[RMDB]
RNA sequence: GGGAACGACUCGAGUAGAGUCGAAAAGAUAUGGAUCGAUCAUAGUGGAGUUCAGUAUCGGAAACGAUACGUGAACGUUGAAACUAUGAGUCGAUCCUAAGUCAAAAGCUGUGCUUCGGCACAGCAACUGCACUUAGUGGUUCGCCACUAAGUGCAGAAAAGAAACAACAACAACAAC
Reactivity to DMS in 0.01 (KOAc 150mM, MgCl2 10mM, bicine 150mM(pH8.5), 24C), signal-to-noise 2, nucleotides 027 to 126: g010a040u000a300u000g030g000a000u000c000g000a060u000c000a010u000a000g000u000g020g000a050g000u000u000c000a140g000u000a000u000c000g010g000a170a110a210c010g020a000u000a000c000g010u030g030a000a010c000g040u000u010g020a160a120a040c000u000a000u000g020a050g020u000c000g000a010u000c000c000u010a000a030g010u010c010a100a060a170a140g020c010u000g010u010g000c000u010u030c190g040g000c000a010c010a000g000c020a020a050
Reactivity to 2A3 in 0.01 (KOAc 150mM, MgCl2 10mM, bicine 150mM(pH8.5), 24C), signal-to-noise 1, nucleotides 027 to 126: g050a010u060a060u190g020g010a020u020c010g000a000u000c000a020u010a010g020u030g050g040a070g000u010u000c010a020g010u010a020u020c020g030g020a020a080a030c030g020a000u010a000c150g120u060g020a010a000c000g030u020u040g020a040a090a000c000u000a000u010g050a010g030u010c010g000a000u010c000c000u010a020a010g050u010c040a030a050a100a140g000c000u010g000u010g000c040u040u180c300g110g000c000a000c010a000g000c000a000a000